Chemical mapping of a 177-nucleotide RNA with DMS and 2A3. Values cover nucleotides 27 to 126. It was measured as part of the RMDB library OK2TRN. For DMS the reverse transcriptase was MarathonRT.

RNA sequence: GGGAACGACUCGAGUAGAGUCGAAAAGCGUCGGUGGCGCGUUGGACGAUGUUGAGCGCCACCUGCAGCGCCGCCACGUCGUCUUGCAUGCGCAUGAGCGCGGUCAUCUUGGGCCGGUGCUCGGCACCGUACACAGGUCUUUCGAGACCUGUGUACGAAAAGAAACAACAACAACAAC
Reactivity to DMS in 0.01 (KOAc 150mM, MgCl2 10mM, bicine 150mM(pH8.5), 24C), signal-to-noise 9, nucleotides 027 to 126: g010c040g010u000c140g030g020u000g010g010c000g020c010g020u000u010g010g000a070c050g010a080u010g010u000u010g010a190g010c020g010c040c020a060c070c040u010g010c080a120g010c030g000c030c030g010c060c030a040c050g010u000c020g000u000c010u000u010g020c140a090u000g010c060g010c020a100u010g000a030g020c010g010c010g000g010u000c010a100u010c220u010u010g030g010g010c000c010g010g010u010g020c010u000c010g000g010c020a060c110
Reactivity to 2A3 in 0.01 (KOAc 150mM, MgCl2 10mM, bicine 150mM(pH8.5), 24C), signal-to-noise 8, nucleotides 027 to 126: g020c020g050u050c070g050g040u020g010g000c000g000c030g020u040u110g090g040a060c080g070a170u180g060u290u210g110a070g050c030g010c030c010a010c010c010u010g010c030a080g010c010g000c010c020g030c030c000a030c030g050u050c010g010u000c020u040u120g040c070a120u150g040c030g000c090a140u220g010a010g000c030g000c020g000g000u010c020a130u060c150u140u200g130g000g000c010c020g090g060u100g010c000u000c000g000g000c020a020c020